[RMDB]
Chemical mapping of a 177-nucleotide RNA with 2A3 and DMS.
For 2A3, 2,038 sequencing reads were counted.
RNA sequence: GGGAACGACUCGAGUAGAGUCGAAAAUCUUUCGUCGACGACGACAGGUACUUCGAAAGAAGAAUCCAUUCACAGUAAAUCCUCGUCAGUUUCGUCGAUGACGACAGGUAAGUUUCCCUUUCCCUCUCAUUGAAUUUCUCUUCGGAGAAAUUCAAUGAAAAGAAACAACAACAACAAC
Reactivity to 2A3 in 0.01 (KOAc 150mM, MgCl2 10mM, bicine 150mM(pH8.5), 24C), signal-to-noise 2, nucleotides 027 to 126: u010c020u010u120u070c020g010u030c020g010a030c010g000a000c010g000a000c000a030g000g030u010a050c010u000u020c010g070a130a040a050g020a020a030g050a050a080u060c060c030a080u160u150c090a090c050a060g040u150a040a060a090u110c020c020u060c100g050u040c030a080g010u020u110u040c010g010u000c000g040a050u040g030a000c010g010a020c000a000g000g060u060a090a120g040u020u020u040c000c040c000u000u000u010c000c000c000u000c000u000
Reactivity to DMS in 0.01 (KOAc 150mM, MgCl2 10mM, bicine 150mM(pH8.5), 24C), signal-to-noise 1, nucleotides 027 to 126: u000c030u020u000u010c000g050u000c000g010a090c030g010a080c020g000a000c110a010g030g000u000a210c020u000u000c010g000a140a060a190g000a000a000g000a170a170u010c080c130a230u020u010c100a080c120a100g020u000a020a100a080u000c040c000u000c180g000u020c090a070g040u000u000u000c010g000u000c000g000a040u000g010a000c300g000a030c070a020g020g000u000a020a100g020u000u000u010c020c000c000u000u000u000c000c000c000u000c160u040